[RMDB]
RNA sequence: GGGAACGACUCGAGUAGAGUCGAAAACUCAGUGUCUGAGUGUCUCUCACACUGAGACAGUGACUCUGAGUGUCUGACAGUGACUGUCUGUGUGUCUGACUCAGAGACAGAGAGAGUCUCACUCAGAGAAACGACUCUUAUUCGUAAGAGUCGUUUCAAAAGAAACAACAACAACAAC
Reactivity to DMS in 0.01 (KOAc 150mM, MgCl2 10mM, bicine 150mM(pH8.5), 24C), signal-to-noise 6, nucleotides 027 to 126: c060u000c000a060g020u000g010u000c040u010g000a020g020u010g000u000c120u010c090u010c120a150c030a020c010u000g000a060g010a040c080a050g010u000g000a240c030u000c020u000g000a030g010u000g000u010c120u010g000a070c070a070g010u000g010a160c020u000g010u000c020u010g000u000g010u000g010u000c090u000g000a110c080u000c010a010g000a030g000a020c030a020g010a090g010a160g010a090g000u010c020u000c010a030c020u000c020a010g000a060
Reactivity to 2A3 in 0.01 (KOAc 150mM, MgCl2 10mM, bicine 150mM(pH8.5), 24C), signal-to-noise 6, nucleotides 027 to 126: c010u010c010a030g060u020g050u030c060u060g060a010g060u110g200u040c030u010c000u010c130a030c000a010c040u020g000a020g020a060c040a050g140u090g090a040c000u000c000u020g010a010g020u020g050u030c130u070g040a030c030a070g070u060g180a070c010u030g080u120c020u030g200u010g020u020g060u050c110u190g060a180c010u010c120a010g010a000g010a090c010a010g090a010g000a000g000a000g020u000c010u010c030a010c010u010c000a000g010a000
Structure probing data (DMS and 2A3) for a 177-nucleotide construct. It was measured as part of the RMDB library OK2TRN. For DMS, 8,813 sequencing reads were counted. High DMS reactivity at an A or C suggests that its Watson-Crick edge is free. The reactions ran in a buffer of 150 mM KOAc, 10 mM MgCl2 and 150 mM bicine (pH 8.5), at 24 C.